[RMDB]
RNA sequence: GGGAACGACUCGAGUAGAGUCGAAAAAGCUAAAUAAAUCGCUGCUAAUUGUCUGGUCUGUUUACGUAAUUUUAAACGAUCUUGUGGCAUUGUAAUUGCAUGUUGAUCUACGAUACAGAAAUAACAAACUUGGCACUUUAUUCGUAAAGUGCCAAGUAAAAGAAACAACAACAACAAC
Reactivity to 2A3 in 0.01 (KOAc 150mM, MgCl2 10mM, bicine 150mM(pH8.5), 24C), signal-to-noise 3, nucleotides 027 to 126: a000g030c060u060a160a010a020u240a000a170a050u130c030g010c050u030g000c000u000a120a150u170u060g050u040c030u020g030g000u030c000u070g020u150u110u000a040c040g040u050a050a240u070u090u060u100a130a090a000c050g020a040u000c000u030u170g040u020g000g000c000a040u030u030g090u160a070a150u120u040g070c000a030u060g090u070u000g040a050u000c150u160a020c060g000a010u030a010c080a020g250a020a110a050u140a140a020c050a080a030
Reactivity to DMS in 0.01 (KOAc 150mM, MgCl2 10mM, bicine 150mM(pH8.5), 24C), signal-to-noise 2, nucleotides 027 to 126: a020g010c060u020a050a070a110u030a130a090a010u030c100g000c050u010g000c020u040a110a050u010u020g040u000c010u010g000g000u000c040u020g000u000u010u000a020c180g010u070a110a080u040u010u020u010a000a040a050c060g010a030u020c130u010u010g050u030g020g000c030a010u000u100g000u000a050a100u030u000g030c000a000u010g050u000u000g000a110u020c050u010a040c110g000a060u020a070c060a030g000a050a050a030u020a020a070c220a060a040
The data come from the RNA Mapping Database (RMDB), library OK1LIB. The record gives the reactivity of an RNA of 177 nucleotides to 2A3 and DMS. For DMS, 2,620 sequencing reads were counted. For 2A3 the reverse transcriptase was SuperScript II with manganese. For 2A3, 1,033 sequencing reads were counted. DMS adducts were read by reverse transcription with MarathonRT. Conditions: 150 mM KOAc, 10 mM MgCl2 and 150 mM bicine (pH 8.5), 24 C.